[RMDB]
An RNA of 177 nucleotides, treated with DMS and 2A3 and read out base by base.
It was measured as part of the RMDB library OK2TST.
DMS adducts were read by reverse transcription with MarathonRT.
For DMS, 3,312 sequencing reads were counted.
RNA sequence: GGGAACGACUCGAGUAGAGUCGAAAAUGGGUGGUUUCAUCCUAGCUCAUGAUCAGGGCCUGACAGUUGACCCACCACCUGUCAUACUGACUCCCAAGUCUGGAUACUUGUAGUGAUCGUGAAUGAGGACACGAUUACUGUUCGCAGUAAUCGUGUCAAAAGAAACAACAACAACAAC
Reactivity to DMS in 0.01 (KOAc 150mM, MgCl2 10mM, bicine 150mM(pH8.5), 24C), signal-to-noise 3, nucleotides 027 to 126: u010g000g010g020u000g000g010u000u000u010c080a060u010c020c010u000a130g040c060u000c040a030u000g010a060u000c060a100g000g020g020c110c070u000g000a030c020a040g000u020u000g020a060c090c050c040a100c260c010a050c070c000u010g000u010c020a040u020a110c130u000g010a110c070u000c060c070c030a100a050g020u000c060u000g020g020a110u020a090c060u000u000g000u000a070g020u000g010a030u000c030g020u000g000a070a070u010g000a140g000
Reactivity to 2A3 in 0.01 (KOAc 150mM, MgCl2 10mM, bicine 150mM(pH8.5), 24C), signal-to-noise 4, nucleotides 027 to 126: u100g010g000g020u030g030g050u030u080u210c040a080u050c000c000u030a030g010c020u000c010a030u050g030a030u040c020a010g040g050g070c000c040u030g030a030c000a030g020u060u020g080a100c020c020c000a020c010c010a010c000c020u010g030u040c010a010u060a150c040u080g050a060c020u040c030c010c020a020a010g020u000c080u130g070g040a060u080a230c030u060u050g090u150a120g050u010g070a020u020c020g010u010g100a080a100u140g040a060g110
High DMS reactivity at an A or C suggests that its Watson-Crick edge is free. The RNA was probed in 150 mM KOAc, 10 mM MgCl2 and 150 mM bicine (pH 8.5) at 24 C.